[RMDB]
RNA sequence: GGGAACGACUCGAGUAGAGUCGAAAAAAAGGCUUAUCAAGAGAGGUGGAGGGACUGGCCCGAUGAAACCCGGCAGCCAGAAAUGGUGCCAAUUCCUGCAGCGGACACGUUGAAAGAUGAGCCGAAAGGUACUAUAUAACUUCGGUUAUAUAGUACCAAAAGAAACAACAACAACAAC
Reactivity to 2A3 in 0.01 (KOAc 150mM, MgCl2 10mM, bicine 150mM(pH8.5), 24C), signal-to-noise 2, nucleotides 027 to 126: a000a000a030g020g000c010u020u010a010u040c110a150a010g060a000g000a070g100g010u010g000g020a020g010g000g000a010c000u030g030g020c000c000c020g050a100u050g040a030a010a020c030c020c000g020g000c020a030g150c010c000a000g030a010a040a020u030g000g000u020g010c000c000a000a010u030u020c000c000u060g000c000a010g010c000g010g040a050c030a010c150g080u020u030g030a030a020a010g010a000u010g010a000g000c000c000g030a010a000a000
Reactivity to DMS in 0.01 (KOAc 150mM, MgCl2 10mM, bicine 150mM(pH8.5), 24C), signal-to-noise 3, nucleotides 027 to 126: a040a050a060g000g000c010u000u000a010u000c010a110a090g000a290g020a090g000g020u000g000g000a070g000g010g010a100c080u000g020g000c010c020c020g000a100u010g010a090a080a100c090c090c020g010g000c160a130g030c010c010a020g000a090a130a060u010g000g010u010g010c010c010a020a050u010u000c010c010u000g000c040a050g000c040g000g000a070c190a040c020g010u010u000g000a140a120a090g010a030u000g000a000g010c000c010g010a040a050a090